[RMDB]
RNA sequence: GGGAACGACUCGAGUAGAGUCGAAAACAGCAGGAUUUUGCGAGAAGAUUCGCCGGUAGAAGCAGUAAGAUGCAAACGAUACAGCAUAGAAGCAUGUUAACUUGAAGGAUGUCGCCUAAACAGCCAGGCGGAACUAUAUCGUGAUGCUAGCGGAUACCAUCGAUCGGGGGUUCGCCCCCGAUCGAUGAAAAGAAACAACAACAACAAC
Reactivity to 2A3 in 0.01 (KOAc 150mM, MgCl2 10mM, bicine 150mM(pH8.5), 24C), signal-to-noise 1, nucleotides 027 to 156: c000a010g020c000a070g100g020a160u000u130u240u300g070c180g000a000g000a300a030g080a240u110u000c000g000c050c030g000g010u120a050g000a090a000g120c050a000g000u010a130a000g000a150u080g000c040a030a030a030c030g030a000u000a190c010a010g000c000a040u040a120g160a110a000g130c080a030u040g080u160u170a090a000c000u080u080g030a020a010g040g000a010u130g040u070c000g060c030c080u240a190a140a170c070a080g040c040c060a000g000g000c000g010g000a000a000c070u030a000u000a000u200c030g080u090g050a010u190g090c000u050a050g000c060g020g000a040u070a080c000